[RMDB]
RNA sequence: GGGAACGACUCGAGUAGAGUCGAAAAUGUCACUUGAGGUGAGUACAUGGUGGAGACACUAUGUACUCACCAGCAGUAAGUGACUGCUAGGGAUGUCACUUGAUGUGAGUACAUGGUGGAGACACUAUGUACUCACAAGCAGUAAGUGACUGCUAAGCGUUUCCACGUAUUUCGAUACGUGGAAACGAAAAGAAACAACAACAACAAC
Reactivity to DMS in 0.01 (KOAc 150mM, MgCl2 10mM, bicine 150mM(pH8.5), 24C), signal-to-noise 1, nucleotides 027 to 156: u000g000u000c020a030c010u000u010g010a260g050g000u000g010a010g030u000a010c000a030u000g030g050u000g010g010a300g030a300c010a020c000u010a030u000g050u000a000c000u000c000a010c010c000a010g050c150a220g020u000a030a030g000u010g000a030c010u000g000c000u000a130g000g000g040a190u000g040u000c000a000c070u010u000g010a220u030g000u000g000a020g050u010a000c010a020u010g000g010u000g000g030a300g010a300c000a030c000u000a010u000g000u000a010c000u020c000a000c000a030a050g020c090a200g000u000a030a110g000u000g000a070c000u000g000c010u010a180a110g030
The record gives the reactivity of an RNA of 207 nucleotides to DMS.
For DMS, 1,557 sequencing reads were counted.